[RMDB]
RNA sequence: GGGAACGACUCGAGUAGAGUCGAAAAUAUAUAGUAUUGGCGAACUUAGCGAUGUGACGAUGUGAAUGCGUGCGGGAUGUACAGAAUAAGGUCAGUCGGAUAAUCACAGAAAUCAAUAUGAGAAGGAGAUGGAUCCUAAUUUCGAUUAGGAUCCAUCAAAAGAAACAACAACAACAAC
Reactivity to 2A3 in 0.01 (KOAc 150mM, MgCl2 10mM, bicine 150mM(pH8.5), 24C), signal-to-noise 2, nucleotides 027 to 126: u080a000u000a000u050a010g020u010a070u090u100g020g000c020g000a060a020c070u080u060a020g030c050g040a040u060g050u070g080a020c080g000a030u070g080u040g110a070a040u100g040c070g020u030g000c010g000g000g000a050u080g020u040a010c000a030g060a090a050u130a170a000g060g000u020c000a040g030u020c020g020g000a030u080a140a030u100c010a030c010a000g090a030a050a020u130c010a010a060u050a100u160g090a080g020a070a030g130g020a090
Reactivity to DMS in 0.01 (KOAc 150mM, MgCl2 10mM, bicine 150mM(pH8.5), 24C), signal-to-noise 3, nucleotides 027 to 126: u010a080u000a100u000a150g000u010a040u000u000g010g030c050g010a080a050c090u010u000a100g020c070g000a060u010g020u000g020a120c060g020a100u000g020u000g010a100a070u020g010c050g010u010g000c060g000g000g000a080u000g010u000a110c100a090g000a080a090u010a060a090g010g000u010c020a060g000u020c050g020g000a100u010a070a100u010c070a050c070a040g000a040a060a060u010c070a050a090u010a060u010g010a130g010a080a090g010g000a220